[RMDB]
RNA sequence: GGGAACGACUCGAGUAGAGUCGAAAAAUGCGCUGAACCCCAAGGCCGUUUUCUUCUUCCUGUCGAUUUUCUCCACGGUCGUUCAUGUCCAUACACCGACCGAAGUGAAACUCGGCUAUGGCGUGGAUCGCAUACUAUACUUCGGUAUAGUAUGCGAAAAAGAAACAACAACAACAAC
Reactivity to DMS in 0.01 (KOAc 150mM, MgCl2 10mM, bicine 150mM(pH8.5), 24C), signal-to-noise 4, nucleotides 027 to 126: a010u010g010c140g000c010u010g010a120a110c050c030c030c050a120a230g010g000c020c030g010u000u000u000u000c120u010u000c130u000u000c000c010u000g040u000c010g010a030u000u000u000u000c010u010c030c100a300c070g010g000u010c010g020u010u000c100a120u010g000u020c140c080a100u010a090c080a090c180c000g000a020c010c030g000a070a080g000u000g000a040a040a060c100u000c000g000g000c040u000a100u010g000g020c090g010u010g010g030a140
Reactivity to 2A3 in 0.01 (KOAc 150mM, MgCl2 10mM, bicine 150mM(pH8.5), 24C), signal-to-noise 2, nucleotides 027 to 126: a000u030g020c050g000c040u020g060a170a280c020c000c020c020a010a030g020g080c010c010g040u020u080u040u080c030u130u010c000u020u020c010c010u000g040u030c010g020a020u000u090u000u000c010u020c030c030a030c040g020g000u000c020g020u080u100c040a060u130g030u100c110c010a020u040a230c040a010c050c010g010a000c000c010g010a070a010g000u010g000a000a010a010c010u000c000g020g000c050u060a110u110g050g010c070g020u020g000g020a030
Description: This 177-nucleotide RNA was probed chemically with DMS and 2A3. DMS adducts were read by reverse transcription with MarathonRT. 2A3 adducts were read by reverse transcription with SuperScript II with manganese. It was measured as part of the RMDB library OK2TST.